[RMDB]
RNA sequence: GGGAACGACUCGAGUAGAGUCGAAAACGGAUUAGGCGUGGAGGCGAAAAUCACCCUCCUCGCAUCGCAAGUUCGUGCUUGCGACUUACACGUAGGGCGAGGGGUGGGCGAAAGUUGCCAUGAGACCAAAAUAUGUAGUUCUUCGGAACUACAUAAACGUUACACUUGGUUUCGACCAAGUGUAACGAAAAGAAACAACAACAACAAC
Reactivity to 2A3 in 0.01 (KOAc 150mM, MgCl2 10mM, bicine 150mM(pH8.5), 24C), signal-to-noise 3, nucleotides 027 to 156: c060g010g030a160u160u190a160g020g000c040g050u030g010g040a000g020g040c070g110a090a070a000a060u090c010a030c000c000c000u000c000c000u020c000g020c000a000u040c010g000c000a000a020g010u210u300c210g240u300g130c000u000u000g010c010g000a000c040u020u100a030c130a000c100g070u140a110g000g110g010c100g000a070g020g010g000g060u250g030g010g000c070g020a080a030a060g010u030u030g000c020c040a050u080g070a070g010a060c050c070a040a000a070a000u040a000u000g000u000a000g010u000u000c000u000u020c130g090g000a000a000c000u000a000c000a000u000a000a020a000
Notes: An RNA of 207 nucleotides, treated with 2A3 and read out base by base. Values cover nucleotides 27 to 156.